Structure probing data (2A3) for a 207-nucleotide construct. The RNA was probed in 150 mM KOAc, 10 mM MgCl2 and 150 mM bicine (pH 8.5) at 24 C.

RNA sequence: GGGAACGACUCGAGUAGAGUCGAAAAGAAAGAAAGAAAGUUCAUUGUUUAUGGGAAACUUUAAACUAUAACCAUUCAAACUUUUCCAGAAGUUAGUUUGAAUAGAAAUUAAAAAGAAACUUCUGAAUAACCUUAUCAUGCUUCGGCAUGAUAAGAAGCUAUGUACAUUGUUCGCAAUGUACAUAGCAAAAGAAACAACAACAACAAC
Reactivity to 2A3 in 0.01 (KOAc 150mM, MgCl2 10mM, bicine 150mM(pH8.5), 24C), signal-to-noise 2, nucleotides 027 to 156: g040a000a030a010g070a040a060a000g070a080a130a010g030u050u040c030a050u100u110g010u050u150u120a070u090g020g010g050a050a040a020c010u010u050u090a050a070a010c020u050a020u070a230a030c030c000a000u010u000c000a010a010a010c010u020u020u020u030c140c000a000g000a020a000g000u000u010a000g000u000u050u000g010a020a010u050a180g020a020a070a010u150u180a030a100a020a000a000g010a000a000a000c000u000u000c000u000g010a010a020u050a020a010c000c000u000u000a000u000c000a000u000g000c000u040u000c080g090g000c000a000u000g000a000u000a000a000g000a000a000